[RMDB]
RNA sequence: GGGAACGACUCGAGUAGAGUCGAAAAAGGCACCCUUCUAUACCAUUUUACAUACAGAGUGGCUGAGAGGUUCUCCUCAGAGCUCUGUUUGUGAACGCAGAGCUUACUGGAGAAACGUUGUAAGAACUGCGUUCAUAGUUCUGUGAAUGUGGUGCCACGGCUAAUUAGGAUUCGUCCUAAUUAGCCGAAAAGAAACAACAACAACAAC
Reactivity to DMS in 0.01 (KOAc 150mM, MgCl2 10mM, bicine 150mM(pH8.5), 24C), signal-to-noise 2, nucleotides 027 to 156: a120g020g000c050a050c000c000c020u030u000c030u000a170u000a070c060c020a110u010u000u000u000a230c110a190u000a070c040a060g010a030g030u000g010g020c000u000g000a050g000a090g020g020u010u000c050u010c030c010u000c020a060g020a300g010c000u000c010u010g000u000u010u020g070u010g000a020a030c080g010c010a020g010a100g020c000u000u000a050c030u000g010g020a240g000a130a070a110c140g000u000u000g010u000a040a060g000a080a060c010u010g000c020g030u000u000c000a010u010a040g010u000u000c090u010g010u010g000a030a050u010g010u010g020g000u000g000c000c040a060
Reactivity to 2A3 in 0.01 (KOAc 150mM, MgCl2 10mM, bicine 150mM(pH8.5), 24C), signal-to-noise 4, nucleotides 027 to 156: a000g000g010c000a010c010c010c010u000u050c090u060a220u070a150c050c040a120u110u150u100u190a040c030a010u120a020c000a000g000a000g030u050g210g080c000u000g010a010g020a060g040g160u200u020c060u060c060c000u020c010a010g000a020g010c010u010c000u010g010u000u020u040g000u000g000a000a000c000g020c000a000g030a030g060c000u010u010a010c020u080g110g060a170g170a170a070a040c060g120u190u120g000u020a010a000g000a070a060c000u000g000c000g000u000u000c000a000u010a010g010u060u060c050u110g080u030g060a050a040u070g060u140g000g010u000g000c000c000a000
About this RNA:
The data come from the RNA Mapping Database (RMDB), library OK3TST. An RNA of 207 nucleotides, treated with DMS and 2A3 and read out base by base. 2A3 adducts were read by reverse transcription with SuperScript II with manganese. The 2A3 profile rests on 2,194 reads.